[RMDB]
RNA sequence: GGGAACGACUCGAGUAGAGUCGAAAAUCGUGAGAUGUGGUGCCUCACGCGCUCGAGGCGUCCGUGGUCAGAGAGACCACUGACGCAAAAACUCGAGCGCAAAUAAAGAGCAUUACAUAAAGAAUAACACUGGUACUAUGUUCGCAUAGUACCAGUGAAAAGAAACAACAACAACAAC
Reactivity to DMS in 0.01 (KOAc 150mM, MgCl2 10mM, bicine 150mM(pH8.5), 24C), signal-to-noise 3, nucleotides 027 to 126: u020c050g000u050g000a050g030a070u010g010u010g040g000u000g060c050c030u000c050a030c060g000c000g000c000u010c000g000a000g030g000c000g000u000c010c120g050u000g000g010u010c000a180g050a240g000a210g000a000c000c000a000c010u010g000a040c010g010c060a050a060a110a070a260c010u000c000g020a000g010c000g060c020a000a060a030u080a030a060a020g010a090g020c000a000u010u030a020c000a020u050a030a060a110g020a260a090u010a040a240
Reactivity to 2A3 in 0.01 (KOAc 150mM, MgCl2 10mM, bicine 150mM(pH8.5), 24C), signal-to-noise 3, nucleotides 027 to 126: u140c040g020u040g070a150g020a070u110g010u010g010g000u010g010c000c010u030c000a050c110g000c000g000c010u000c000g000a000g010g000c000g000u000c000c000g000u000g000g000u010c050a020g120a100g040a020g000a300c000c010a000c000u010g000a000c000g000c000a040a080a050a040a040c000u000c000g000a000g000c000g000c000a010a010a000u100a010a050a020g070a020g000c000a000u010u000a010c010a000u130a060a140a000g200a080a110u190a100a010

An RNA of 177 nucleotides, treated with DMS and 2A3 and read out base by base. Conditions: 150 mM KOAc, 10 mM MgCl2 and 150 mM bicine (pH 8.5), 24 C. DMS adducts were read by reverse transcription with MarathonRT. For 2A3 the reverse transcriptase was SuperScript II with manganese.